[RMDB]
RNA sequence: GGGAACGACUCGAGUAGAGUCGAAAAGCCUUAUUCGUAAGGCAUCCGUGAUAUGGAUUAUAUCGAGGAAACGAACUACGUUGCUUGUCGGAAACGACAAACAACGCGUUUCCUAAGACAGUAUAAUCCUAAGUCCGUUCAGCGGAUUCGUCCGCAAUGCGUAUAGAUAAUUCGUUAUCUAUACGCAAAAAGAAACAACAACAACAAC
Reactivity to 2A3 in 0.01 (KOAc 150mM, MgCl2 10mM, bicine 150mM(pH8.5), 24C), signal-to-noise 6, nucleotides 027 to 156: g000c000c000u010u000a080u050u120c300g050u050a000a000g000g000c000a040u050c060c050g060u160g010a010u010a010u080g000g010a000u010u000a000u000a020u150c060g040a030g010g000a010a010a010c010g020a040a050c110u160a050c300g000u000u000g000c030u000u010g000u000c000g000g000a040a020a020c010g000a000c000a000a010a000c000a000a000c000g000c000g000u000u000u000c000c000u010a070a020g010a000c010a000g020u010a000u000a010a000u000c000c000u000a050a010g010u000c050c050g120u200u260c100a040g000c010g000g010a010u020u060c160g080u010c020c000g010c000a030a070
Reactivity to DMS in 0.01 (KOAc 150mM, MgCl2 10mM, bicine 150mM(pH8.5), 24C), signal-to-noise 4, nucleotides 027 to 156: g020c000c000u000u000a060u010u010c300g020u030a020a000g020g050c010a060u000c040c020g030u010g010a080u000a300u010g000g010a010u000u000a000u000a010u000c040g010a030g040g010a020a000a020c010g010a110a300c010u000a080c010g020u000u000g020c000u000u000g010u010c020g020g010a090a100a250c000g020a020c010a000a000a000c010a010a010c010g000c000g000u000u000u000c000c020u010a030a080g000a120c300a060g010u000a010u000a000a010u000c010c000u000a080a170g000u000c000c040g000u010u000c090a140g010c000g000g010a080u000u000c190g030u000c010c010g000c010a040a260